[RMDB]
RNA sequence: GGGAACGACUCGAGUAGAGUCGAAAAAACAGCAGCAGCAGCAGCAGUUGCAGCAGGAGCAGCAGCAACAGGAUCAGCAGCAGUCACAGCAGGAGACACCUGCAACCAUUGCUACCAAUGGCAGCAAUAAAAGAACACAGUUCGCUGUGUUCUUUUAAAAAGAAACAACAACAACAAC
Reactivity to DMS in 0.01 (KOAc 150mM, MgCl2 10mM, bicine 150mM(pH8.5), 24C), signal-to-noise 4, nucleotides 027 to 126: a060a020c060a040g010c040a040g020c040a040g020c050a060g020c000a070g000c020a060g020u000u000g000c050a080g030c040a060g000g000a090g010c050a060g030c060a030g000c040a040a050c090a070g000g010a060u000c050a060g000c030a040g010c020a040g010u010c080a050c150a150g010c010a030g010g010a210g010a100c170a100c040c010u000g010c020a100a070c060c060a070u000u000g000c060u010a040c090c050a090a080u010g030g030c050a030g000c030a060a060
This 177-nucleotide RNA was probed chemically with DMS.
The reactions ran in a buffer of 150 mM KOAc, 10 mM MgCl2 and 150 mM bicine (pH 8.5), at 24 C.
Reactivities are given for positions 27 through 126.
DMS adducts were read by reverse transcription with MarathonRT.
It was measured as part of the RMDB library OK2TRN.